[RMDB]
RNA sequence: GGGAACGACUCGAGUAGAGUCGAAAAAUAACAAAACAAAUUUUGCUCGAAGUACUAUGACUGUACCUAGUCCUUACUGUCAUAUGUACAAUAAUAUUCAUUUCCCAUAAAAGCCAAGUGUAUUACCCAUCAAAGUGAUGUUCGCAUCACUUUGAUGAAAAGAAACAACAACAACAAC
Reactivity to 2A3 in 0.01 (KOAc 150mM, MgCl2 10mM, bicine 150mM(pH8.5), 24C), signal-to-noise 5, nucleotides 027 to 126: a010u120a040a030c070a040a040a030a010c080a040a200a050u090u100u090u100g030c020u050c100g110a140a010g030u000a000c010u010a000u010g010a010c000u010g000u020a010c010c040u040a020g060u090c010c000u020u010a000c000u010g000u000c000a020u020a040u270g020u010a000c010a000a010u110a020a010u020a100u070u030c080a060u010u010u050c010c010c000a040u170a020a100a020a000g020c040c030a060a010g030u020g030u060a080u110u140a060c020c040
Reactivity to DMS in 0.01 (KOAc 150mM, MgCl2 10mM, bicine 150mM(pH8.5), 24C), signal-to-noise 3, nucleotides 027 to 126: a060u070a050a130c170a060a050a060a170c120a060a120a080u000u010u000u020g000c080u000c080g000a110a100g000u000a000c020u000a000u000g010a010c000u000g000u000a020c160c040u000a120g030u010c110c100u010u000a020c010u000g010u000c000a020u000a010u080g040u000a000c000a110a080u010a050a060u000a050u010u030c100a120u000u010u000c000c010c010a180u020a060a070a090a110g000c090c110a030a160g030u000g010u000a060u000u010a080c100c100